[RMDB]
RNA sequence: GGGAACGACUCGAGUAGAGUCGAAAAGAAUACGAUAAUUACAAUCGCUACUACGAUUUGGAAUUUGUUAGUCACUGUAAUAACUACAGUGUUUACCACAAUUAUGACUAUCGCAAUAACAAUUUGGACCGAAUGGAAAGUUCGCUUUCCAUUCGGUAAAAGAAACAACAACAACAAC
Reactivity to DMS in 0.01 (KOAc 150mM, MgCl2 10mM, bicine 150mM(pH8.5), 24C), signal-to-noise 2, nucleotides 027 to 126: g000a170a100u040a130c000g000a040u000a030a060u010u010a170c070a060a000u000c040g000c090u000a080c160u010a120c030g000a020u000u000u010g000g010a060a050u000u000u000g000u000u000a040g000u000c000a000c000u000g000u000a020a270u020a080a170c150u000a000c030a000g010u000g000u000u000u000a050c100c090a050c140a020a020u000u000a100u000g020a040c030u000a000u000c010g000c030a040a040u000a040a090c130a070a100u000u000u010g020g000
Reactivity to 2A3 in 0.01 (KOAc 150mM, MgCl2 10mM, bicine 150mM(pH8.5), 24C), signal-to-noise 2, nucleotides 027 to 126: g000a030a050u100a060c030g050a030u060a100a060u160u030a050c030a010a040u010c000g020c030u150a050c010u040a030c020g010a000u110u010u120g010g010a040a050u030u020u050g020u020u020a010g020u000c000a010c000u010g000u000a040a090u050a300a110c050u000a000c020a000g020u010g000u000u000u050a040c010c000a030c030a090a050u120u090a060u250g050a000c000u000a010u000c020g000c110a070a110u080a100a030c020a050a080u150u040u100g070g000